Structure probing data (2A3 and DMS) for a 177-nucleotide construct. The reactions ran in a buffer of 150 mM KOAc, 10 mM MgCl2 and 150 mM bicine (pH 8.5), at 24 C. In probing experiments dimethyl sulfate is read out at A N1 and C N3, which are open when not base-paired.

RNA sequence: GGGAACGACUCGAGUAGAGUCGAAAAAGCUGCGAGGCUUACGAGCCUCGCAGCACGCACAGUUCGAAGGCCGUCAUCCCCUGUACUACAUCUUAGGGUGCUUUCGGUUCAAAGGCUGUGCCAGAAAGUACUGUGACAAUUUCGAUUGUCACAGUACAAAAGAAACAACAACAACAAC
Reactivity to 2A3 in 0.01 (KOAc 150mM, MgCl2 10mM, bicine 150mM(pH8.5), 24C), signal-to-noise 6, nucleotides 027 to 126: a000g000c000u010g010c010g000a000g020g000c030u060u040a030c300g060a000g000c000c020u010c000g000c000a010g000c000a000c000g000c000a000c010a030g050u300u300c010g020a090a020g010g000c010c000g000u010c010a060u100c000c000c000c000u020g080u150a120c030u080a090c140a140u120c070u100u220a040g020g000g010u100g030c030u020u040u040c010g020g050u300u300c040a070a070a010g010g000c000u000g000u000g000c000c000a060g120a010a070a020
Reactivity to DMS in 0.01 (KOAc 150mM, MgCl2 10mM, bicine 150mM(pH8.5), 24C), signal-to-noise 2, nucleotides 027 to 126: a060g010c000u010g010c020g070a040g020g030c000u010u000a110c150g000a040g000c000c050u000c020g000c030a000g030c010a020c100g050c010a000c000a000g000u000u000c000g020a240a300g000g000c000c000g000u000c040a010u000c010c000c010c000u000g020u000a040c150u030a160c230a100u070c150u010u020a010g010g010g000u000g030c190u010u000u000c000g000g010u000u020c030a040a200a160g000g000c000u010g010u000g000c000c120a080g000a080a060a090